Chemical mapping of a 177-nucleotide RNA with DMS. For DMS the reverse transcriptase was MarathonRT. DMS (dimethyl sulfate) methylates the pairing face of unpaired adenines and cytosines. The reactions ran in a buffer of 150 mM KOAc, 10 mM MgCl2 and 150 mM bicine (pH 8.5), at 24 C. For DMS, 594 sequencing reads were counted.
[RMDB]
RNA sequence: GGGAACGACUCGAGUAGAGUCGAAAAGAUAUGGAAGCCAUUCAGGGAGCCUUGCGUCUCGGAAACGAGACCAAGGCGACGAUCUGACGGUGGCUUCCUAAGUCAAACUGUCCCUUCGGGGACAGAACUUCGGUGUAUUCUUCGGAAUACACCGAAGAAAAGAAACAACAACAACAAC
Reactivity to DMS in 0.01 (KOAc 150mM, MgCl2 10mM, bicine 150mM(pH8.5), 24C), signal-to-noise 1, nucleotides 027 to 126: g020a040u010a300u000g000g000a010a000g000c000c000a040u000u010c040a010g000g000g050a010g060c000c000u000u010g000c300g010u000c000u000c010g040g040a130a070a210c000g000a000g020a020c010c000a030a050g010g060c010g000a060c280g000a010u000c000u000g010a010c300g000g010u000g000g010c000u000u000c020c000u010a000a060g010u000c020a020a070a130c000u000g010u010c000c040c000u000u050c300g080g000g040g000a010c000a000g000a070a060